[RMDB]
RNA sequence: GGGAACGACUCGAGUAGAGUCGAAAAACAGGUGAGCUGGUCGAAGGUUGCCUGGUCGGGGGCGAAACCUGAGAUGACGAUUGUACUCGACCUAAGCCUGUAGACGCUUCGUGUGGAACAUUCUCGGACGCGGGUUCGAUUCCCGCCGCCUCCACCACUGACAUUGAAACUUCGGUUUCAAUGUCAGAAAAGAAACAACAACAACAAC
Reactivity to 2A3 in 0.01 (KOAc 150mM, MgCl2 10mM, bicine 150mM(pH8.5), 24C), signal-to-noise 3, nucleotides 027 to 156: a000c000a010g000g000u050g050a090g050c110u040g050g000u000c000g030a080a030g090g030u070u040g020c020c030u040g030g010u090c160g030g000g000g000g010c000g030a110a050a030c000c040u050g020a020g010a030u040g080a040c070g060a070u050u200g050u140a090c020u020c030g000a000c000c010u000a080a010g000c010c000u020g020u050a050g060a090c100g070c120u100u100c110g100u080g050u150g130g050a070a020c020a050u120u060c010u010c030g020g000a040c040g020c000g010g030g000u060u100c080g020a030u060u070c000c000c000g010c000c010g000c000c000u020c000c000a010c000c010a000
Reactivity to DMS in 0.01 (KOAc 150mM, MgCl2 10mM, bicine 150mM(pH8.5), 24C), signal-to-noise 1, nucleotides 027 to 156: a060c010a070g040g040u020g010a240g070c110u000g030g000u000c050g050a170a270g030g000u000u030g020c010c050u000g020g040u000c070g100g000g080g020g000c010g030a080a010a120c050c040u000g020a180g030a070u010g010a080c030g010a180u000u000g020u000a040c110u000c000g010a030c000c010u020a040a190g000c000c000u020g000u000a050g010a100c100g000c080u000u010c150g020u010g000u010g000g000a110a140c060a100u000u010c010u000c000g040g000a100c060g000c000g040g040g020u000u010c080g010a300u000u000c000c020c000g030c060c030g000c030c000u010c020c040a050c000c000a300

Notes: Conditions: 150 mM KOAc, 10 mM MgCl2 and 150 mM bicine (pH 8.5), 24 C. Chemical mapping of a 207-nucleotide RNA with 2A3 and DMS. For 2A3 the reverse transcriptase was SuperScript II with manganese.